[RMDB]
RNA sequence: GGGAACGACUCGAGUAGAGUCGAAAAGAUAUGGACUGAAUGAGCAUCGUUAUGUGACUUGGAUUUAUCGAUCGGAAACGAUCGAUUGUCAGUCACAUAACGUUUGCAAUGCUCACAGUCCUAAGUCCACAUCAAUUCUCUUCGGAGAAUUGAUGUGAAAAGAAACAACAACAACAAC
Reactivity to DMS in 0.01 (KOAc 150mM, MgCl2 10mM, bicine 150mM(pH8.5), 24C), signal-to-noise 4, nucleotides 027 to 126: g000a120u000a300u000g020g010a020c000u000g000a210a150u000g010a010g030c000a030u000c000g020u000u000a010u000g010u000g000a010c000u010u010g030g010a040u000u030u000a000u000c000g000a020u000c000g020g000a130a140a210c010g020a000u000c000g010a000u010u000g010u000c010a030g000u010c000a000c000a010u000a000a000c000g010u000u010u000g010c300a140a050u000g000c020u000c000a040c010a010g040u000c010c000u000a010a090g010u000c020
Reactivity to 2A3 in 0.01 (KOAc 150mM, MgCl2 10mM, bicine 150mM(pH8.5), 24C), signal-to-noise 4, nucleotides 027 to 126: g030a020u130a060u200g000g000a000c000u010g130a300a300u080g000a020g020c000a020u090c040g000u000u000a000u000g000u000g010a020c020u150u300g240g000a060u300u300u160a060u060c010g000a000u000c020g030g050a080a040a080c020g000a000u000c000g000a000u010u000g000u000c010a010g000u000c000a000c000a000u000a000a000c000g000u010u030u030g020c030a010a000u040g000c000u010c000a020c000a000g000u010c010c000u000a020a020g000u010c020